Chemical mapping of a 207-nucleotide RNA with 2A3 and DMS.
The reactions ran in a buffer of 150 mM KOAc, 10 mM MgCl2 and 150 mM bicine (pH 8.5), at 24 C.
The 2A3 profile rests on 4,274 reads.
As a SHAPE reagent, 2A3 marks flexible, mostly unpaired nucleotides at the ribose 2'-OH.
2A3 adducts were read by reverse transcription with SuperScript II with manganese.
Values cover nucleotides 27 to 156.
RNA sequence: GGGAACGACUCGAGUAGAGUCGAAAAACGCGGAGUACGCUCCGCGACAACACUUCUUUCGACCCGCUAACCGAGACCUAUGGGUCGUUAAAUUACGUCUCUAUCUUACUCACAUAACAGCGCACAAAAAACGUGGUUCGGUUCGCCGAACCACGAACCUAUAUGGAGUGUUCGCACUCCAUAUAGGAAAAGAAACAACAACAACAAC
Reactivity to 2A3 in 0.01 (KOAc 150mM, MgCl2 10mM, bicine 150mM(pH8.5), 24C), signal-to-noise 6, nucleotides 027 to 156: a000c010g010c010g010g000a000g020u070a050c170g040c060u010c000c000g050c010g030a010c010a080a020c040a020c040u110u110c040u060u270u160c010g000a010c010c010c000g010c200u170a010a010c020c030g010a000g030a030c000c010u020a070u280g010g000g010u000c000g050u030u030a020a030a010u140u030a020c010g010u000c000u000c000u020a100u080c040u060u130a090c040u100c110a080c030a150u220a200a080c030a110g030c050g060c130a050c110a070a100a030a060a070a030c060g010u000g000g000u010u000c000g000g020u040u040c130g030c070c000g000a000a000c000c000a000c000g000a000a000
Reactivity to DMS in 0.01 (KOAc 150mM, MgCl2 10mM, bicine 150mM(pH8.5), 24C), signal-to-noise 2, nucleotides 027 to 156: a050c040g000c000g000g020a040g060u000a140c260g040c000u000c000c010g010c000g020a080c050a050a160c100a090c070u000u000c090u000u010u000c000g000a030c000c010c050g010c140u010a110a140c050c070g000a090g020a070c010c050u000a120u010g020g000g000u000c000g020u000u000a040a070a140u020u000a050c060g020u000c020u010c000u000a120u000c070u010u000a080c030u000c020a080c100a100u000a080a050c060a070g000c030g000c040a100c060a000a100a130a130a100a060c040g050u010g030g010u000u000c010g050g030u000u020c300g050c000c000g000a000a000c030c000a000c000g000a010a020